[RMDB]
RNA sequence: GGGAACGACUCGAGUAGAGUCGAAAAGAUAUGGACCCGCCUCGCGAUAAGAUGACCAUCGGAAACGAUGGCCAUCUUUUGACGCGGGUGGGUCCUAAGUCAAAAGGCCUCUCUUCGGAGAGGCCAAGCUUCCAGUAUGGUUCGCCAUACUGGAAGCAAAAGAAACAACAACAACAAC
Reactivity to DMS in 0.01 (KOAc 150mM, MgCl2 10mM, bicine 150mM(pH8.5), 24C), signal-to-noise 1, nucleotides 027 to 126: g000a000u010a280u000g000g010a030c010c010c010g000c010c060u010c050g090c000g000a150u000a010a060g020a000u000g000a010c010c000a000u000c000g000g000a090a070a090c000g000a010u010g000g010c010c010a000u000c000u000u000u010u030g000a190c060g000c000g000g000g060u010g000g000g020u020c000c000u000a000a030g000u000c020a030a090a080a100g020g010c000c000u020c000u000c000u010u020c220g030g010a000g010a020g020g010c000c000a000a010

Source: RMDB library TTRDEL, as collected in RNAgym. An RNA of 177 nucleotides, treated with DMS and read out base by base. The RNA was probed in 150 mM KOAc, 10 mM MgCl2 and 150 mM bicine (pH 8.5) at 24 C.